Structure probing data (DMS and 2A3) for a 177-nucleotide construct. Source: RMDB library TTRDEL, as collected in RNAgym. Conditions: 150 mM KOAc, 10 mM MgCl2 and 150 mM bicine (pH 8.5), 24 C. Values are in units of 0.01, from 0 to 300, in steps of 10. For DMS the reverse transcriptase was MarathonRT.

RNA sequence: GGGAACGACUCGAGUAGAGUCGAAAAGAUAUGGAUCCGGUGAGGGAGGCCAUCGGAAACGAUGGGCCGACGAUCUCAUCGGAUCCUAAGUCAAAGGAUCUACAGAACUUCGGUUCUGUAGAUCCAACCAAAUGCAAAAGUUCGCUUUUGCAUUUGGAAAAGAAACAACAACAACAAC
Reactivity to DMS in 0.01 (KOAc 150mM, MgCl2 10mM, bicine 150mM(pH8.5), 24C), signal-to-noise 4, nucleotides 027 to 126: g000a040u000a300u010g000g000a000u000c000c010g000g030u000g000a020g000g000g000a020g030g020c000c000a020u000c000g010g000a110a090a140c000g010a010u000g000g030g030c000c000g000a030c250g000a030u010c000u000c000a010u000c000g000g000a000u000c000c000u000a000a050g010u010c030a100a150a150g000g000a010u000c000u000a010c000a000g000a020a010c000u000u020c230g010g010u000u000c000u000g000u000a000g000a000u000c000c010a020a040
Reactivity to 2A3 in 0.01 (KOAc 150mM, MgCl2 10mM, bicine 150mM(pH8.5), 24C), signal-to-noise 2, nucleotides 027 to 126: g020a010u070a020u180g010g000a010u000c000c000g000g030u010g000a000g000g000g020a010g000g000c000c000a010u010c010g020g010a070a040a000c010g000a000u070g060g180g100c020c000g030a010c000g000a010u020c010u000c000a010u000c000g010g000a000u000c000c000u000a000a000g020u000c020a020a030a080g010g000a000u020c000u010a000c000a000g020a020a000c010u130u200c300g010g000u000u010c000u000g000u010a000g000a000u010c000c000a000a010